[RMDB]
RNA sequence: GGGAACGACUCGAGUAGAGUCGAAAAUAGCGAAGUAUGAUUUUAUGCGUCAAGUGUUCACAGGCUGGGGAGUCGCCGUGAAACGAAAAGCAGAAAGCGUGCUGCUUACGAUAUAAUUUCCGCACCCAUAAGAAGUCUCUGUUCGCAGAGACUUCAACCUUUCUGCCUACUUCGGUAGGCAGAAAGGAAAAGAAACAACAACAACAAC
Reactivity to 2A3 in 0.01 (KOAc 150mM, MgCl2 10mM, bicine 150mM(pH8.5), 24C), signal-to-noise 1, nucleotides 027 to 156: u090a020g030c040g030a110a000g120u110a070u210g060a050u060u000u040u010a030u080g040c010g020u010c060a030a080g030u080g070u170u030c040a010c060a110g010g000c020u110g020g000g000g040a040g120u160c060g040c000c000g000u010g010a080a020a000c000g010a020a020a020a020g000c000a000g050a040a170a000g040c050g070u050g020c010u010g000c000u040u000a020c000g030a010u000a000u010a170a060u020u050u000c000c000g000c020a040c000c030c000a000u050a160a050g000a000a000g000u000c000u000c020u010g020u000u060c160g000c060a000g000a010g000a000c000u000u000c000a000a000

The record gives the reactivity of an RNA of 207 nucleotides to 2A3. The 2A3 profile rests on 783 reads. The RNA was probed in 150 mM KOAc, 10 mM MgCl2 and 150 mM bicine (pH 8.5) at 24 C. For 2A3 the reverse transcriptase was SuperScript II with manganese.